[RMDB]
RNA sequence: GGGAACGACUCGAGUAGAGUCGAAAAGCGUACUACUCACCUUUUGACGAAGGUCGUAUAGGGAGAGCCUCCCAAAUAGGAGGCUCGUUGAUCUAUAUAACCUUCGAUAAGGUGAGUAUCGCAAAGUGCAGGAGGAUUGUUCGCAAUCCUCCUGCACCGCUAUGCCUCAGUUCGCUGAGGCAUAGCGAAAAGAAACAACAACAACAAC
Reactivity to 2A3 in 0.01 (KOAc 150mM, MgCl2 10mM, bicine 150mM(pH8.5), 24C), signal-to-noise 2, nucleotides 027 to 156: g000c010g050u140a130c040u000a000c000u060c000a000c000c020u010u050u080u150g170a110c020g010a020a000g000g000u030c030g010u020a010u010a020g000g020g000a030g010a000g010c030c000u000c000c040c040a190a270a050u300a050g010g000a000g000g050c000u000c000g000u010u000g010a000u000c000u000a010u010a010u000a010a020c000c000u010u000c000g000a000u010a000a000g010g000u000g000a010g000u000a000u000c000g030c010a060a070a010g020u000g000c000a010g000g010a000g060g020a010u010u030g060u100u220c300g030c160a010a000u000c000c010u000c000c000u000g000c000a000c000
Structure probing data (2A3) for a 207-nucleotide construct.